[RMDB]
RNA sequence: GGGAACGACUCGAGUAGAGUCGAAAACCCUGCUUCGGCAGGGGGAAUACCGUAGGAAUCUCGGGCCACACAACAAGGAAUGGUCUUCGAAAGAGGACCCAUUCUGUGUGGUCUCUAGCGUGGAUUCCUAAACGGACAACAACUCGUUCGCGAGUAAACUCGAAACGGAAUUCGUUCCGUUUCGAGUAAAAGAAACAACAACAACAAC
Reactivity to 2A3 in 0.01 (KOAc 150mM, MgCl2 10mM, bicine 150mM(pH8.5), 24C), signal-to-noise 1, nucleotides 027 to 156: c010c010c000u000g000c020u000u080c230g080g040c000a000g010g000g000g030g000a030a110u160a110c000c000g000u000a000g010g020a000a000u000c000u000c040g000g000g020c000c000a000c010a000c000a210a160c020a300a030g160g000a000a010u000g000g000u010c000u000u000c010g060a070a040a020g000a000g000g000a020c000c000c000a000u000u030c030u000g000u000g000u030g040g000u000c000u000c000u000a000g000c040g080u180g070g000a000u000u000c000c000u000a000a050a000c000g010g070a010c030a080a000c000a050a040c120u000c000g090u150u140c190g030c020g160a020g000u150a270a070